[RMDB]
RNA sequence: GGGAACGACUCGAGUAGAGUCGAAAAAGUCUAUAGAGGCGUGAUCAGUGUGGGCGCUUGGGGCAAGUUCCUUGGAAGAGGACAGCAUGGAGGGUGAUACUCCCGUUCAUCCCUGAGUUGCUCGUGCCAUAUAUUUCGAGUUCGCUCGAAAUAUAUGAAAAGAAACAACAACAACAAC
Reactivity to 2A3 in 0.01 (KOAc 150mM, MgCl2 10mM, bicine 150mM(pH8.5), 24C), signal-to-noise 3, nucleotides 027 to 126: a000g060u020c040u030a150u040a120g110a050g060g020c040g020u030g050a060u070c050a010g030u030g000u050g070g000g000c000g000c020u020u020g000g010g000g010c020a050a020g050u140u030c000c000u000u010g060g010a060a040g000a020g010g000a010c010a010g050c030a050u100g020g000a020g000g000g000u010g020a040u080a110c050u030c010c000c010g040u040u040c010a090u110c000c000c000u010g020a030g010u060u300g160c000u000c020g010u000g020c000
Reactivity to DMS in 0.01 (KOAc 150mM, MgCl2 10mM, bicine 150mM(pH8.5), 24C), signal-to-noise 8, nucleotides 027 to 126: a100g000u010c020u000a070u010a170g000a050g010g000c020g010u000g010a130u000c050a130g020u010g010u000g000g000g000c020g000c020u000u000g020g000g000g010c300a040a060g000u010u000c000c000u000u000g000g050a300a110g000a020g000g000a020c040a060g010c110a170u010g030g010a090g000g000g010u000g010a110u010a100c090u000c010c000c020g000u000u010c050a170u000c010c000c000u000g000a040g010u000u010g030c010u000c020g020u000g000c070